[RMDB]
RNA sequence: GGGAACGACUCGAGUAGAGUCGAAAAUUUUUGGGACAGUAGGGCCUGGAUGAAAGAACCCAGGGAUGCUCUCUGCCGUUUUUGCCAACAUAAUCAGCAGCCUAGAACCCUAGAGUAGCAGGGCAUCUCUACGUCUAAAUUUCGAUUUAGACGUAGAAAAAGAAACAACAACAACAAC
Reactivity to 2A3 in 0.01 (KOAc 150mM, MgCl2 10mM, bicine 150mM(pH8.5), 24C), signal-to-noise 4, nucleotides 027 to 126: u060u050u010u040u050g030g000g010a040c030a060g130u130a040g090g070g030c010c010u010g000g030a060u070g110a050a140a190g060a050a040c010c020c000a000g030g000g010a050u090g010c010u000c000u000c010u030g020c000c010g020u040u010u000u070u070g060c040c020a070a050c040a120u180a110a050u070c020a010g030c010a000g000c020c000u070a070g040a100a090c060c000c000u020a030g000a010g060u080a010g010c050a010g000g030g000c010a070u020c010
Reactivity to DMS in 0.01 (KOAc 150mM, MgCl2 10mM, bicine 150mM(pH8.5), 24C), signal-to-noise 8, nucleotides 027 to 126: u000u000u000u000u010g010g000g000a080c060a100g020u000a070g010g000g020c020c010u000g010g010a050u000g010a130a120a190g000a140a110c080c020c020a050g000g010g010a050u000g000c020u000c020u000c010u000g000c020c040g010u000u000u000u000u000g010c090c090a070a090c130a050u000a050a060u000c050a050g010c030a040g000c040c040u000a060g000a060a090c070c060c020u000a070g010a090g010u000a040g010c080a040g000g000g010c060a030u000c050
Annotation:
The record gives the reactivity of an RNA of 177 nucleotides to 2A3 and DMS. DMS adducts were read by reverse transcription with MarathonRT. High DMS reactivity at an A or C suggests that its Watson-Crick edge is free.